Source: RMDB library OK3TST, as collected in RNAgym. The record gives the reactivity of an RNA of 207 nucleotides to DMS and 2A3. The DMS profile rests on 3,004 reads. The reactions ran in a buffer of 150 mM KOAc, 10 mM MgCl2 and 150 mM bicine (pH 8.5), at 24 C.

[RMDB]
RNA sequence: GGGAACGACUCGAGUAGAGUCGAAAAUCGAGAAUCCUGCAGCCAUUCAGCCAUUUGAAGGUCUGAUUAGAAAGCCAACUCCAGAGGAAAAAAUUGCAAAUGAGACCUACAAGAGGAUAGCUCUGGAUAGAGCUAACAGGAAUCAAACUUUUGCCAACUAACACGAGUAAUUCGUUACUCGUGUUAGAAAAGAAACAACAACAACAAC
Reactivity to DMS in 0.01 (KOAc 150mM, MgCl2 10mM, bicine 150mM(pH8.5), 24C), signal-to-noise 2, nucleotides 027 to 156: u010c040g030a270g030a140a150u020c030c030u000g040c030a140g050c020c040a110u010u010c040a120g010c020c010a120u010u010u000g030a140a090g020g000u010c000u030g000a080u000u010a180g030a080a090a120g010c020c030a100a120c090u000c030c000a100g020a080g040g030a010a050a050a070a090a200u000u020g000c040a070a070a150u010g010a160g010a070c090c010u020a060c050a030a140g010a120g000g000a110u000a080g010c020u000c010u020g040g030a080u000a060g020a130g020c020u010a060a020c050a040g000g010a080a060u010c040a040a070a070c110u000u010u000u000g020c030c020a050a090
Reactivity to 2A3 in 0.01 (KOAc 150mM, MgCl2 10mM, bicine 150mM(pH8.5), 24C), signal-to-noise 4, nucleotides 027 to 156: u080c020g010a010g050a090a070u010c000c000u030g010c050a010g030c010c040a080u030u030c020a030g020c040c010a140u170u160u210g120a130a030g000g010u030c000u020g010a030u020u030a070g090a120a070a000g000c010c010a010a030c030u030c010c020a020g020a080g060g000a040a080a020a070a020a090u220u190g020c020a000a090a080u120g020a070g030a050c010c010u060a100c090a110a040g040a050g170g000a030u040a040g030c010u010c000u030g020g000a000u050a030g070a020g000c010u010a030a020c000a010g030g000a010a040u050c060a060a040a110c020u090u110u130u180g060c050c010a040a050